[RMDB]
Source: RMDB library OK2TST, as collected in RNAgym. Structure probing data (DMS and 2A3) for a 177-nucleotide construct. Conditions: 150 mM KOAc, 10 mM MgCl2 and 150 mM bicine (pH 8.5), 24 C. Values cover nucleotides 27 to 126.
RNA sequence: GGGAACGACUCGAGUAGAGUCGAAAAAUUGCCAGCGCAUCGAACCACUCGCCGGUCAGCGCGGCAGGCGGCGGCAAAUCGAGCCCGGUUGUGGCGUCGCCGAGAGAGCGUAGCACCCGGGGUGCGAACUAAAUGGCGGAUUCGUCCGCCAUUUAGUAAAAGAAACAACAACAACAAC
Reactivity to DMS in 0.01 (KOAc 150mM, MgCl2 10mM, bicine 150mM(pH8.5), 24C), signal-to-noise 3, nucleotides 027 to 126: a090u000u000g030c030c030a140g010c020g020c040a100u010c120g000a100a140c060c050a090c070u010c060g050c060c030g010g020u000c030a170g020c040g030c020g010g000c040a060g020g010c010g020g000c020g010g010c020a010a020a060u000c020g020a150g030c090c070c010g020g000u000u000g030u010g010g020c030g020u000c020g000c010c010g000a100g010a150g000a100g010c010g010u000a130g020c080a110c050c000c020g010g010g020g020u010g000c050g000a090
Reactivity to 2A3 in 0.01 (KOAc 150mM, MgCl2 10mM, bicine 150mM(pH8.5), 24C), signal-to-noise 1, nucleotides 027 to 126: a020u120u060g050c020c010a050g010c040g020c020a090u080c050g080a090a060c010c000a020c100u060c060g000c010c020g050g000u050c080a070g000c030g010c000g040g030c010a000g010g000c020g000g000c030g020g050c000a040a000a040u040c020g080a080g220c090c150c020g050g000u140u070g250u060g130g040c010g020u020c000g000c000c010g030a030g000a000g010a000g000c010g050u090a040g000c030a060c000c010c020g000g000g010g020u020g000c040g000a010